[RMDB]
RNA sequence: GGGAACGACUCGAGUAGAGUCGAAAAAGAGAGGUAAAGAGAUAUGGUGAAUUUGCUCUGAUACUCCACUACCUAGUUAUAGCUCUAAAUUCUGUGACAAUUGCUGAGCUAGAAAACAUCAGACGCACAGUUCAGUAGUGUUCGCACUACUGAACUGAAAAGAAACAACAACAACAAC
Reactivity to 2A3 in 0.01 (KOAc 150mM, MgCl2 10mM, bicine 150mM(pH8.5), 24C), signal-to-noise 6, nucleotides 027 to 126: a000g270a000g020a000g030g050u100a040a060a020g090a020g010a060u090a060u270g160g100u250g070a180a180u060u100u170g060c010u020c020u000g000a000u030a090c010u040c010c010a050c040u140a110c010c000u020a030g020u050u040a080u030a100g000c000u000c010u020a040a070a060u110u060c120u150g300u210g090a140c120a060a040u020u050g070c060u060g050a000g000c000u020a010g040a000a080a020a010c050a020u120c060a000g060a110c100g000c050a020
Reactivity to DMS in 0.01 (KOAc 150mM, MgCl2 10mM, bicine 150mM(pH8.5), 24C), signal-to-noise 6, nucleotides 027 to 126: a070g010a210g000a020g000g000u000a090a150a030g030a020g000a060u020a080u020g010g020u040g000a100a060u030u030u020g010c020u000c010u000g010a090u040a060c040u000c000c020a100c090u020a130c020c000u000a090g000u010u000a090u010a010g000c000u000c010u000a100a010a030u000u000c120u040g030u030g000a080c190a010a000u000u010g000c130u010g000a000g020c010u000a030g000a040a070a070a070c160a080u010c070a050g000a090c130g010c130a170